[RMDB]
RNA sequence: GGGAACGACUCGAGUAGAGUCGAAAAGAAAUGAACCCUACCCGCAAGCUAUGGCCAUCCAAGGUAAGUGCGGGCAAAAGCCCGCCGCCAUAGCGUCCCGCAAGGGAUAGGGUAGGGAAGGAGGAAACGAAGUCCUUUACUUCGGUAAAGGACUUCGAAAAGAAACAACAACAACAAC
Reactivity to 2A3 in 0.01 (KOAc 150mM, MgCl2 10mM, bicine 150mM(pH8.5), 24C), signal-to-noise 1, nucleotides 027 to 126: g080a010a100a100u180g050a110a090c000c000c000u000a000c000c010c010g020c160a020a000g040c000u010a000u000g000g010c000c030a070u030c140c030a210a120g000g000u070a000a000g000u030g020c020g040g000g000c010a250a300a000a000g000c000c000c000g000c020c000g000c000c000a000u000a000g080c000g000u030c020c000c000g000c010a050a010g000g000g000a000u070a060g000g000g000u000a000g000g000g000a000a000g000g000a000g000g100a000a230a040
Reactivity to DMS in 0.01 (KOAc 150mM, MgCl2 10mM, bicine 150mM(pH8.5), 24C), signal-to-noise 2, nucleotides 027 to 126: g000a040a100a100u020g000a150a050c000c000c000u000a000c000c070c040g010c300a150a200g010c010u010a000u000g000g010c020c000a090u030c140c080a130a300g000g000u000a000a000g020u000g040c040g060g000g000c010a040a030a100a090g020c000c000c020g010c020c000g040c010c000a000u000a010g000c000g000u000c010c000c000g030c200a250a120g000g000g000a000u020a080g050g000g000u000a000g000g000g000a000a020g000g000a080g010g000a040a240a260
An RNA of 177 nucleotides, treated with 2A3 and DMS and read out base by base. 2A3 adducts were read by reverse transcription with SuperScript II with manganese. For 2A3, 761 sequencing reads were counted.